Conditions: 150 mM KOAc, 10 mM MgCl2 and 150 mM bicine (pH 8.5), 24 C.
This 207-nucleotide RNA was probed chemically with DMS and 2A3.
Values cover nucleotides 27 to 156.
For 2A3, 1,766 sequencing reads were counted.
2A3 adducts were read by reverse transcription with SuperScript II with manganese.
Source: RMDB library M2RFOK, as collected in RNAgym.

[RMDB]
RNA sequence: GGGAACGACUCGAGUAGAGUCGAAAAAUCAGAGGGCGCUAUCAUGCAAACUAGGAUUGUCUGCACAUGCACAGAACCAACUACCGAUAACUAACAGUGCAUGAAGGUUAGUUAUUCCAUAUUAAUUAAAACUCGUAAUUCUUCGGAAUUACGAGAACUAAUCGUCCAUGUUCGCAUGGACGAUUAGAAAAGAAACAACAACAACAAC
Reactivity to DMS in 0.01 (KOAc 150mM, MgCl2 10mM, bicine 150mM(pH8.5), 24C), signal-to-noise 1, nucleotides 027 to 156: a140u000c060a160g010a240g000g020g010c060g010c050u010a080u010c070a090u000g010c000a020a080a200c010u000a190g000g030a080u010u020g030u000c020u000g090c030a080c060a070u000g080c030a090c030a110g020a050a040c010c100a100a130c040u010a220c090c090g000a070u020a060a030c000u000a040a050c010a120g000u000g000c130a110u000g040a110a120g000g000u000u000a030g020u000u000a080u000u010c090c040a070u000a120u000u010a030a110u000u030a050a040a120a130c000u000c010g040u000a010a030u000u000c020u000u000c300g020g020a030a000u020u000a000c000g000a000g020a010a060
Reactivity to 2A3 in 0.01 (KOAc 150mM, MgCl2 10mM, bicine 150mM(pH8.5), 24C), signal-to-noise 4, nucleotides 027 to 156: a000u040c030a020g030a040g060g000g000c010g000c060u090a130u250c070a040u210g060c050a060a040a030c030u040a050g020g020a060u040u080g020u040c010u060g000c060a010c000a030u020g020c020a010c000a010g060a080a050c060c030a080a040c050u180a110c060c080g010a000u000a000a000c000u010a010a000c030a060g010u010g030c010a010u030g050a030a030g080g000u000u000a000g000u000u030a000u090u060c070c000a020u090a050u250u230a100a130u150u110a100a130a060a060c010u000c000g000u000a000a010u000u000c010u030u060c160g030g010a000a000u000u010a000c000g000a000g000a000a000